The record gives the reactivity of an RNA of 207 nucleotides to DMS and 2A3. Source: RMDB library OK3TST, as collected in RNAgym.

RNA sequence: GGGAACGACUCGAGUAGAGUCGAAAAACAGUAGUUCUUGCUCCUCCUUGAUUCUAGCAUCCUCUUCAUUAUUUUCUUCUACGUACAUAAGCAUGUCCAAUACGUUAGACAACACACCGACGAUGGCGGCCGCCACAGACACGAAUAUGACUAGACCCCAACGAUAAUGUUUCGACAUUAUCGUUGGAAAAGAAACAACAACAACAAC
Reactivity to DMS in 0.01 (KOAc 150mM, MgCl2 10mM, bicine 150mM(pH8.5), 24C), signal-to-noise 2, nucleotides 027 to 156: a070c070a090g030u000a090g000u000u010c030u010u020g000c010u000c040c020u000c030c040u000u020g030a110u000u000c040u000a080g000c090a100u000c020c000u000c030u000u000c050a090u020u000a100u000u010u010u000c040u000u010c020u020a050c010g010u020a060c050a070u000a060a160g010c010a080u030g000u000c050c020a090a130u010a040c070g030u000u000a080g010a170c010a050a080c070a120c000a070c050c040g000a100c050g010a070u010g000g000c090g020g010c030c040g030c040c000a050c020a080g000a120c030a120c050g000a050a070u000a070u000g010a070c070u010a080g000a100c070c080
Reactivity to 2A3 in 0.01 (KOAc 150mM, MgCl2 10mM, bicine 150mM(pH8.5), 24C), signal-to-noise 5, nucleotides 027 to 156: a000c050a030g100u130a030g030u080u050c030u050u060g030c030u010c030c000u030c010c020u030u070g030a060u080u020c030u050a010g020c000a030u030c020c030u040c010u140u020c070a070u050u150a120u090u120u020u040c050u070u000c010u030a040c050g060u010a010c030a100u100a060a060g040c050a060u090g040u050c030c010a040a060u040a070c020g050u060u060a060g020a060c030a050a040c020a040c010a020c030c040g040a060c050g030a060u040g020g030c010g040g000c030c020g020c000c020a040c020a040g020a000c010a020c070g060a060a020u130a100u120g070a050c020u010a020g040a060c020c010